[RMDB]
RNA sequence: GGGAACGACUCGAGUAGAGUCGAAAAAUAAUACUUGUCAUAGACUAGGUGCACCAAAUAUAUUAGUCCAUGAAUGCACAUUGCCAUAAUUCAUUAAGUACCUAUUAUGGAACAGUAACCACCAUUCAACCUGUACUUCUUUCGAGAAGUACAGGUUAAAAGAAACAACAACAACAAC
Reactivity to DMS in 0.01 (KOAc 150mM, MgCl2 10mM, bicine 150mM(pH8.5), 24C), signal-to-noise 3, nucleotides 027 to 126: a060u040a140a120u010a050c060u000u010g010u010c020a050u000a060g000a100c060u000a060g010g010u010g010c060a090c100c070a050a080a070u020a080u000a070u000u000a060g010u000c050c030a020u010g010a050a070u010g000c120a040c100a020u000u000g020c040c060a040u000a020a050u000u010c070a090u010u000a100a100g000u000a060c090c020u000a050u000u010a050u000g000g000a080a040c100a060g000u010a040a150c070c040a120c080c090a120u000u000c100
Reactivity to 2A3 in 0.01 (KOAc 150mM, MgCl2 10mM, bicine 150mM(pH8.5), 24C), signal-to-noise 2, nucleotides 027 to 126: a000u190a020a050u060a070c020u050u110g010u020c000a070u030a080g040a060c090u020a020g030g030u030g020c000a030c030c040a020a190a010u210a030u030a030u100u110a020g030u000c030c020a010u030g090a050a040u140g020c070a050c030a140u110u170g010c030c010a070u050a060a040u140u070c030a010u080u140a170a000g000u030a030c000c000u020a050u160u010a010u020g020g020a060a040c000a050g020u020a000a060c020c010a030c030c000a040u100u130c030
Source information: The record gives the reactivity of an RNA of 177 nucleotides to DMS and 2A3. 2A3 adducts were read by reverse transcription with SuperScript II with manganese. The reactions ran in a buffer of 150 mM KOAc, 10 mM MgCl2 and 150 mM bicine (pH 8.5), at 24 C.